[RMDB]
RNA sequence: GGGAACGACUCGAGUAGAGUCGAAAAGAACGCCGAUGGCAAGCCAUCCCAGCAGGGAUACACCACCGAGGCGGUCUGGCGGACGUUGCGAAUCCUCGGUCCAGCGACCCCGGAGCAGAUCGCCGCAUCGGUGGCGGCCUCGGGCACGACCGUGUCGCCUCGAGAUACUAUUCGUAGUAUCUCGAGGAAAAGAAACAACAACAACAAC
Reactivity to 2A3 in 0.01 (KOAc 150mM, MgCl2 10mM, bicine 150mM(pH8.5), 24C), signal-to-noise 1, nucleotides 027 to 156: g010a050a000c020g070c020c010g050a120u230g000g000c060a120a030g040c000c050a020u000c000c000c020a030g120c140a160g000g000g000a020u050a030c030a040c020c000a010c000c040g020a020g000g020c000g000g020u010c000u000g150g080c040g010g030a080c000g020u000u030g000c080g130a080a070u120c110c020u080c070g100g030u010c010c000a000g000c000g030a160c000c000c000c060g040g030a120g060c010a020g020a010u000c000g000c000c040g000c040a050u070c000g000g000u000g020g000c000g060g000c000c000u000c040g030g050g000c030a050c060g030a070c040c020g030u090g030u050c090g030
The data come from the RNA Mapping Database (RMDB), library OK3TST.
An RNA of 207 nucleotides, treated with 2A3 and read out base by base.